[RMDB]
RNA sequence: GGGAACGACUCGAGUAGAGUCGAAAACCACCAUUUAAGAGUAUAUUACUUAAAUCUUUGAUUUACUUAGUAGCCUCUUACAAUGCACUUAUAGCUUAAAUUUAUACAAGCUUUGUGUGUUAGCACUUUAAGCAACAGAAUAAACUGAACGCAUGUACCUGAUUUAGCUGUUCGCAGCUAAAUCAGGAAAAGAAACAACAACAACAAC
Reactivity to 2A3 in 0.01 (KOAc 150mM, MgCl2 10mM, bicine 150mM(pH8.5), 24C), signal-to-noise 1, nucleotides 027 to 156: c010c020a020c010c010a020u000u040u070a000a000g000a000g040u120a040u000a000u030u020a000c000u040u000a010a000a000u030c060u230u130u300g010a010u000u010u020a000c000u000u000a020g010u000a000g000c000c000u000c000u000u020a000c040a070a020u060g000c060a050c000u210u130a070u140a190g000c000u000u000a060a100a170u230u300u140a220u050a090c100a050a070g010c000u080u110u050g010u010g000u000g060u070u080a150g030c020a050c070u060u030u110a070a010g010c080a060a080c050a050g110a160a120u160a110a150a020c050u100g030a050a000c060g040c080a000u070g000u110a080
The record gives the reactivity of an RNA of 207 nucleotides to 2A3. Conditions: 150 mM KOAc, 10 mM MgCl2 and 150 mM bicine (pH 8.5), 24 C. 2A3 adducts were read by reverse transcription with SuperScript II with manganese. As a SHAPE reagent, 2A3 marks flexible, mostly unpaired nucleotides at the ribose 2'-OH.